[RMDB]
This 207-nucleotide RNA was probed chemically with 2A3 and DMS. Conditions: 150 mM KOAc, 10 mM MgCl2 and 150 mM bicine (pH 8.5), 24 C. DMS adducts were read by reverse transcription with MarathonRT.

RNA sequence: GGGAACGACUCGAGUAGAGUCGAAAAACGAGUGAGUUACGACUCACUCGACUUUUAAUGCUACCCAAAGGUCGUGACAAGUCCAUAAAACGCAGAGUCAAAAAGUCCGACGUUACGACGUCGGACAACGAGCGAGUUCUGUUCGCAGAACUCGCAAGUACAUGUUCAUCUUCGGAUGAACAUGUACAAAAGAAACAACAACAACAAC
Reactivity to 2A3 in 0.01 (KOAc 150mM, MgCl2 10mM, bicine 150mM(pH8.5), 24C), signal-to-noise 3, nucleotides 027 to 156: a000c020g000a010g000u010g000a000g000u020u070a080c210g030a020c090u010c000a000c000u000c000g000a000c010u060u060u030u200a110a080u120g020c030u100a120c000c030c000a080a070a020g040g000u040c020g040u030g030a040c040a080a040g030u030c020c020a080u160a090a070a000a010c070g010c100a030g030a030g110u080c030a030a080a000a060a040g000u000c000c000g000a010c000g000u020u030a080c260g020a010c000g050u000c000g010g000a000c000a000a010c010g040a010g000c000g000a000g000u000u000c000u020g040u050u040c160g000c070a000g000a000a000c000u010c000g000c000a000a000
Reactivity to DMS in 0.01 (KOAc 150mM, MgCl2 10mM, bicine 150mM(pH8.5), 24C), signal-to-noise 1, nucleotides 027 to 156: a070c040g000a040g030u000g000a020g030u000u000a140c210g040a110c030u000c030a030c000u000c010g000a030c060u000u040u000u000a070a090u000g030c030u000a090c070c000c030a140a140a050g000g000u000c030g040u010g000a300c120a010a170g030u020c040c040a130u000a040a030a060a080c060g000c040a120g010a160g000u000c000a030a090a050a120a100g020u000c000c000g020a030c000g080u000u020a090c190g030a090c000g000u000c030g000g030a000c000a000a010c040g010a130g000c040g000a030g050u010u000c000u020g040u030u000c240g040c000a050g010a010a020c000u000c010g030c010a000a040